[RMDB]
RNA sequence: GGGAACGACUCGAGUAGAGUCGAAAAUCCAGUACGUUCGCGUACUGGAAAAGUCGCGGCUUGAGGCCGUGUACGGCAGCGCACACACACGACCCUCAAGCCAAAGUCCGUACUUCGGUACGGACAACAACGGUAGUACCUUCGGGUACUACCGUUGAAAAGAAACAACAACAACAAC
Reactivity to 2A3 in 0.01 (KOAc 150mM, MgCl2 10mM, bicine 150mM(pH8.5), 24C), signal-to-noise 1, nucleotides 027 to 126: u000c000c000a000g020u000a000c010g000u010u090c210g010c000g100u000a000c000u020g030g000a040a020a010a000g090u090c040g020c130g120g000c010u010u010g000a000g020g030c020c020g000u000g010u000a000c040g040g030c040a120g150c070g000c100a070c000a000c010a000c000a000c150g060a080c020c000c000u020c000a000a000g000c000c000a010a000a000g000u000c000c000g000u000a010c010u010u090c280g050g000u000a010c010g010g010a000c010a000a000
Reactivity to DMS in 0.01 (KOAc 150mM, MgCl2 10mM, bicine 150mM(pH8.5), 24C), signal-to-noise 2, nucleotides 027 to 126: u000c000c000a050g000u000a000c000g040u010u000c250g040c010g040u000a000c000u030g030g020a010a020a050a130g000u010c140g010c300g020g010c010u000u000g000a030g000g050c170c000g000u000g030u000a050c150g000g000c070a110g010c090g000c070a080c050a090c100a040c020a000c000g000a070c170c030c010u000c000a030a000g010c000c010a010a060a050g000u000c000c000g000u010a000c000u010u000c150g060g010u000a000c000g000g000a010c000a020a040
An RNA of 177 nucleotides, treated with 2A3 and DMS and read out base by base. 2A3 is a SHAPE reagent: it acylates the 2'-hydroxyl of flexible nucleotides of all four kinds. For DMS, 1,553 sequencing reads were counted.